Source: RMDB library VIROID, as collected in RNAgym. Structure probing data (DMS and 2A3) for a 177-nucleotide construct. The RNA was probed in 150 mM KOAc, 10 mM MgCl2 and 150 mM bicine (pH 8.5) at 24 C.

[RMDB]
RNA sequence: GGGAACGACUCGAGUAGAGUCGAAAAUUCAACCUGCGUGGGUUGAGGCGACUUAGCGGAUUAAGGCGUUCUGCCCCAGUGGUCCAUUACCCCAUGCAAAGUCUGCAUGCAGGCGGGGUAGUGUUCUGAUCUUAGGAAUCUUCGGAUUCCUAAGAUCAAAAGAAACAACAACAACAAC
Reactivity to DMS in 0.01 (KOAc 150mM, MgCl2 10mM, bicine 150mM(pH8.5), 24C), signal-to-noise 1, nucleotides 027 to 126: u000u000c020a030a020c030c000u010g020c270g060u000g060g000g010u010u000g000a020g020g000c020g020a050c030u000u010a180g000c060g000g040a200u010u030a040a010g010g010c020g040u000u000c030u000g040c010c020c010c010a120g010u020g000g010u020c150c010a020u000u000a020c000c000c000c000a150u000g000c120a050a100a130g030u000c020u000g020c050a130u000g000c020a010g020g000c060g030g040g000g030u000a000g040u000g010u000u000c040u000
Reactivity to 2A3 in 0.01 (KOAc 150mM, MgCl2 10mM, bicine 150mM(pH8.5), 24C), signal-to-noise 1, nucleotides 027 to 126: u020u010c010a030a000c000c020u130g140c180g180u300g000g000g010u010u010g000a020g010g000c020g000a020c020u010u000a020g020c050g000g140a190u130u220a030a010g040g010c000g040u040u010c030u050g030c000c000c000c000a140g050u210g060g020u080c070c020a040u020u020a030c020c000c000c020a010u080g000c060a000a030a080g090u070c050u020g030c000a110u100g000c000a020g120g100c080g000g000g000g000u000a010g000u000g000u080u000c050u070